[RMDB]
RNA sequence: GGGAACGACUCGAGUAGAGUCGAAAACUGGCAGUUGUCGGGGUGGGCCGAUGUGCUUUCGCCAUGCCUGUGCCAGAUGUUGCCGCCGAUCCUUGUUUCGUGCGAACCAGCGGGGCACGGCGUGCCAAAGCCGUGCACCAUUCGUGGUGCACGGCUUAAAAGAAACAACAACAACAAC
Reactivity to DMS in 0.01 (KOAc 150mM, MgCl2 10mM, bicine 150mM(pH8.5), 24C), signal-to-noise 4, nucleotides 027 to 126: c050u010g010g010c010a090g010u010u010g000u010c050g000g000g020g020u000g010g000g030c050c040g020a090u010g020u000g020c060u000u000u000c060g020c070c010a060u000g010c030c010u010g020u000g010c010c020a050g000a110u010g010u010u010g010c110c010g010c010c010g010a060u010c090c150u010u010g000u000u000u010c100g010u000g020c120g010a100a060c100c050a080g010c040g010g010g000g000c090a050c020g000g000c020g020u000g010c040c110a070
Reactivity to 2A3 in 0.01 (KOAc 150mM, MgCl2 10mM, bicine 150mM(pH8.5), 24C), signal-to-noise 2, nucleotides 027 to 126: c010u000g030g030c030a140g090u180u080g060u100c020g000g000g000g090u090g040g020g000c040c020g110a170u100g090u200g060c010u060u090u070c050g070c050c010a040u060g060c000c000u070g010u010g010c040c000a050g030a110u240g050u090u080g000c020c000g000c000c010g030a080u000c040c070u100u130g150u130u120u050c060g050u110g040c040g050a070a070c010c000a010g040c010g050g010g040g000c060a000c030g000g030c040g020u080g030c000c040a020